[RMDB]
RNA sequence: GGGAACGACUCGAGUAGAGUCGAAAAAGUAUGAUUAGGGUGAGACCUAGGAACCGUAGGGGUAUUCUCAAAGGAAGCUUUUGCAGUGACGCCCAUGUAAGUGGGAUAUAACAACAGAACUCGUAUGUGUGGCACAGAGAGUUCGCUCUCUGUGCAACCCUUAAAUAAUGUUCGCAUUAUUUAAGGGAAAAGAAACAACAACAACAAC
Reactivity to 2A3 in 0.01 (KOAc 150mM, MgCl2 10mM, bicine 150mM(pH8.5), 24C), signal-to-noise 4, nucleotides 027 to 156: a000g130u090a070u120g030a080u100u070a040g040g000g000u040g060a100g030a040c010c010u030a050g050g030a060a050c040c040g040u060a040g030g010g010g000u030a090u090u050c070u020c050a070a070a020g050g010a050a020g010c020u030u040u090u110g000c030a010g010u010g030a030c040g010c000c000c020a010u070g050u130a090a100g010u010g000g010g000a010u040a010u030a100a050c070a010a000c000a020g060a090a040c030u050c140g050u070a080u130g090u010g020u050g060g000c010a000c000a000g010a000g000a000g020u050u010c020g040c010u000c000u000c000u010g000u010g010c000a000a000
Reactivity to DMS in 0.01 (KOAc 150mM, MgCl2 10mM, bicine 150mM(pH8.5), 24C), signal-to-noise 3, nucleotides 027 to 156: a070g030u000a080u010g000a130u000u000a060g060g010g040u000g000a150g000a120c030c030u000a120g010g010a050a080c030c040g020u000a080g000g020g020g010u010a080u000u000c010u000c050a050a060a110g000g020a070a090g010c020u000u000u000u010g030c010a110g020u000g000a180c090g010c010c000c000a050u010g000u000a080a120g040u000g000g020g010a070u000a050u000a140a080c050a050a090c080a090g000a050a050c040u010c040g000u000a090u000g010u010g010u010g010g000c000a020c010a020g000a040g010a030g030u000u000c300g020c000u000c000u000c000u000g020u010g020c010a010a040

Record summary
This 207-nucleotide RNA was probed chemically with 2A3 and DMS. Reactivities are given for positions 27 through 156. For 2A3, 3,476 sequencing reads were counted. For 2A3 the reverse transcriptase was SuperScript II with manganese. Conditions: 150 mM KOAc, 10 mM MgCl2 and 150 mM bicine (pH 8.5), 24 C.